[RMDB]
RNA sequence: GGGAACGACUCGAGUAGAGUCGAAAAGAUCUGUUUGUCUACGGGAAAUACCCCGUGUGGAAAGGAGUUCCUCUGUCCAUGGAUAUCAAGAAGAUCAUGCGGAUAUUUUCCAACUCUAACCAGGAAAUCAGGACAUGUGUUUCGACACAUGUCCUGAAAAAGAAACAACAACAACAAC
Reactivity to DMS in 0.01 (KOAc 150mM, MgCl2 10mM, bicine 150mM(pH8.5), 24C), signal-to-noise 1, nucleotides 027 to 126: g000a050u000c000u020g000u000u010u000g010u000c050u000a060c090g040g010g010a070a050a100u020a140c290c020c000c120g000u010g000u000g000g010a050a080a150g020g000a130g010u000u020c050c030u000c110u000g050u000c010c070a050u020g010g000a050u000a110u000c080a110a010g000a110a120g000a030u000c040a060u000g000c080g000g000a190u000a050u010u020u000u000c010c020a020a120c090u000c060u000a050a080c120c100a090g010g000a030a110a160